[RMDB]
RNA sequence: GGGAACGACUCGAGUAGAGUCGAAAAUAUGGACGACGACGUCCGACGGCGAGGCCGUUGAGCUAGCCAGCGAGACGCUGAUGAAGCGCGAACUGACGAGCUUUGUGGUGCUGGUUCCCCAGGGAACCUAUCACGACCGAUUCGUCGGUCGUGAUAGAAAAGAAACAACAACAACAAC
Reactivity to 2A3 in 0.01 (KOAc 150mM, MgCl2 10mM, bicine 150mM(pH8.5), 24C), signal-to-noise 6, nucleotides 027 to 126: u280a080u120g010g010a000c030g000a020c100g030a050c060g020u000c010c000g000a020c020g010g030c050g070a150g120g030c010c020g030u030u070g010a010g000c010u010a010g010c010c000a000g000c010g000a060g040a060c020g000c010u030g020a110u200g040a070a000g000c000g000c000g030a040a010c010u030g010a010c020g020a010g010c000u020u060u080g060u060g030g060u160g020c020u040g000g090u020u020c000c000c000c000a030g060g000g020a010a000c010
Reactivity to DMS in 0.01 (KOAc 150mM, MgCl2 10mM, bicine 150mM(pH8.5), 24C), signal-to-noise 7, nucleotides 027 to 126: u040a070u040g010g010a020c010g020a190c240g010a140c050g010u000c010c010g010a060c090g000g010c040g020a130g040g000c010c020g010u010u010g010a050g020c010u000a100g000c020c010a020g020c040g000a300g000a210c020g000c000u010g000a100u060g000a190a010g000c010g030c010g000a200a100c020u010g020a040c010g000a030g010c010u000u010u000g010u010g010g010u000g010c030u000g000g020u000u000c010c010c000c150a160g010g000g000a070a050c070